This 177-nucleotide RNA was probed chemically with 2A3 and DMS.
For 2A3, 967 sequencing reads were counted.
High DMS reactivity at an A or C suggests that its Watson-Crick edge is free.
For DMS the reverse transcriptase was MarathonRT.
It was measured as part of the RMDB library OK2TST.
The RNA was probed in 150 mM KOAc, 10 mM MgCl2 and 150 mM bicine (pH 8.5) at 24 C.
[RMDB]
RNA sequence: GGGAACGACUCGAGUAGAGUCGAAAAAUCUGAAUCACCUCCGCUUUCGCGUAUUGCGCAAGAACUCGGUUCGUUGACCCGUCGAGGUCGACUGCAGAACGUACCUCCGGAGGCGGCGUUAUCGCCACUAAUAUCAGGGCUUCGGCCCUGAUAUUAGAAAAGAAACAACAACAACAAC
Reactivity to 2A3 in 0.01 (KOAc 150mM, MgCl2 10mM, bicine 150mM(pH8.5), 24C), signal-to-noise 1, nucleotides 027 to 126: a000u070c060u040g030a030a060u070c000a060c000c000u000c020c010g100c040u010u070u040c030g000c010g050u210a160u130u250g030c000g000c050a050a030g000a040a020c030u030c110g130g000u050u030c030g000u030u040g030a030c030c010c030g100u090c070g030a140g070g000u010c000g010a060c070u140g050c010a060g020a100a000c050g020u030a020c000c020u090c070c010g030g020a020g010g050c020g010g000c010g040u110u220a170u140c000g000c000c000a060
Reactivity to DMS in 0.01 (KOAc 150mM, MgCl2 10mM, bicine 150mM(pH8.5), 24C), signal-to-noise 3, nucleotides 027 to 126: a050u000c060u020g020a120a120u020c100a190c020c010u000c010c020g010c070u010u000u010c070g000c030g000u000a120u010u010g010c020g020c140a060a060g000a070a090c070u000c090g010g010u000u000c100g000u000u000g000a050c040c050c040g000u010c190g000a050g020g000u010c000g010a060c100u000g020c080a040g020a070a060c040g010u010a090c110c060u000c170c010g010g000a020g010g010c110g010g000c050g000u000u000a140u010c030g020c010c040a280